RNA sequence: GGGAACGACUCGAGUAGAGUCGAAAACAUUGAUUCGUCAAUGGUACAAACCUUUGUGCAUGGAAAAGAGGACGAUAAGUCCCGGAGUCCCAUUGGGACUCCGAGGACUUUUGACGUCCUGACAUGCACUCUGGUGCGUCUACGCAUUCGUGCGUAAUACCCUCUCCUAUUUCGAUAGGAGAGGGUAAAAAGAAACAACAACAACAAC
Reactivity to 2A3 in 0.01 (KOAc 150mM, MgCl2 10mM, bicine 150mM(pH8.5), 24C), signal-to-noise 3, nucleotides 027 to 156: c010a000u000u020g010a020u050u110c130g050u020c050a010a010u020g030g030u110a050c050a030a120a030c010c000u010u040u010g000u000g000c000a000u010g010g090a080a110a150a160g280a150g010g000a000c010g020a040u010a060a000g000u000c000c000c000g000g000a000g000u000c000c050c100a260u250u300g010g000g000a000c000u000c000c000g000a010g000g000a000c040u020u000u020u030g190a060c020g000u000c010c000u000g000a000c000a000u000g010c010a000c000u000c010u010g000g000u020g040c020g010u010c030u020a000c000g000c000a010u050u100c240g120u050g010c010g010u010a020a020
Reactivity to DMS in 0.01 (KOAc 150mM, MgCl2 10mM, bicine 150mM(pH8.5), 24C), signal-to-noise 2, nucleotides 027 to 156: c000a010u000u000g000a030u000u000c220g030u000c000a020a020u000g000g010u020a120c100a090a240a130c060c000u010u010u010g020u000g000c000a020u000g010g000a090a160a140a230g020a070g010g000a010c000g020a160u000a040a040g000u000c000c010c030g000g000a030g040u000c000c000c000a300u000u010g100g080g000a000c000u000c000c010g000a090g040g010a020c000u000u000u000u000g020a190c060g000u000c000c000u020g010a070c000a020u000g020c000a000c000u000c030u010g030g000u000g000c200g000u010c030u000a030c000g000c000a090u000u010c260g020u000g020c000g000u020a050a290
This 207-nucleotide RNA was probed chemically with 2A3 and DMS.
The DMS profile rests on 3,370 reads.
For DMS the reverse transcriptase was MarathonRT.